Structure probing data (DMS and 2A3) for a 177-nucleotide construct.
RNA sequence: GGGAACGACUCGAGUAGAGUCGAAAAGAGCAGAUGUCCAUUACGCGAAUGCCUGUGCUUUUCGACGUUUAGUUUAGUCUGCAAGAUAGAAUUGAUGUCUCGAAGACAGGUACAUCAGCUUUUAGAGGUGUAUCGCAUAGUUCGCUAUGCGAUACACAAAAGAAACAACAACAACAAC
Reactivity to DMS in 0.01 (KOAc 150mM, MgCl2 10mM, bicine 150mM(pH8.5), 24C), signal-to-noise 2, nucleotides 027 to 126: g000a080g010c000a070g030a070u000g000u000c040c040a150u000u000a100c280g020c100g020a080a090u000g000c030c070u040g000u000g000c030u000u000u000u000c080g000a010c010g020u000u000u010a000g010u010u030u000a250g000u000c010u010g020c190a100a080g000a010u000a250g010a030a060u000u000g000a020u000g010u000c000u000c090g000a060a100g010a050c050a010g000g020u000a080c030a030u000c050a080g010c020u000u000u000u000a100g000a150g020
Reactivity to 2A3 in 0.01 (KOAc 150mM, MgCl2 10mM, bicine 150mM(pH8.5), 24C), signal-to-noise 2, nucleotides 027 to 126: g030a000g000c020a000g000a020u040g070u030c030c010a060u150u210a040c060g030c040g100a110a000u080g050c000c010u050g020u140g080c000u090u040u040u020c040g030a040c000g020u000u060u050a010g000u010u010u010a060g010u030c010u060g200c070a030a060g010a030u140a030g040a060a070u040u050g020a000u040g030u000c010u000c080g020a040a030g050a060c000a030g040g000u050a010c000a000u030c000a010g000c040u100u000u060u140a100g010a060g020
The RNA was probed in 150 mM KOAc, 10 mM MgCl2 and 150 mM bicine (pH 8.5) at 24 C. For 2A3 the reverse transcriptase was SuperScript II with manganese.